[RMDB]
RNA sequence: GGGAACGACUCGAGUAGAGUCGAAAAUAGUAACGUAGCCGUGCUUCGUUGACGACAGUUUCAUUGUUGGCGUGCAGUAAUUUGCAAUGAAGAUCCUCGAGCACCAACACGGUCAAACGAUGCCUCAACUAAUGGACGCAUUCGUGCGUCCAUUAGUAAAAGAAACAACAACAACAAC
Reactivity to DMS in 0.01 (KOAc 150mM, MgCl2 10mM, bicine 150mM(pH8.5), 24C), signal-to-noise 2, nucleotides 027 to 126: u000a120g010u000a050a050c040g020u000a140g020c070c090g000u000g050c070u010u000c060g000u000u000g050a080c050g020a090c270a060g000u000u000u000c050a050u010u010g000u000u000g000g010c070g020u010g010c070a140g020u000a080a040u020u010u000g000c020a040a020u000g010a050a040g000a060u010c090c070u000c020g010a190g000c030a080c040c040a000a090c050a030c020g010g020u010c040a050a070a100c050g010a100u000g000c010c020u000c110a080
Reactivity to 2A3 in 0.01 (KOAc 150mM, MgCl2 10mM, bicine 150mM(pH8.5), 24C), signal-to-noise 1, nucleotides 027 to 126: u090a010g120u060a100a030c040g010u000a010g020c000c000g040u060g000c060u000u050c020g080u000u090g020a060c000g000a020c010a060g030u040u050u000c020a010u030u040g040u080u070g050g020c100g030u180g090c140a040g050u080a070a170u080u130u090g000c000a010a030u040g000a020a000g020a050u050c000c000u000c050g020a030g040c000a000c020c000a120a000c000a000c050g000g090u130c060a150a110a000c060g060a070u050g030c110c010u040c030a050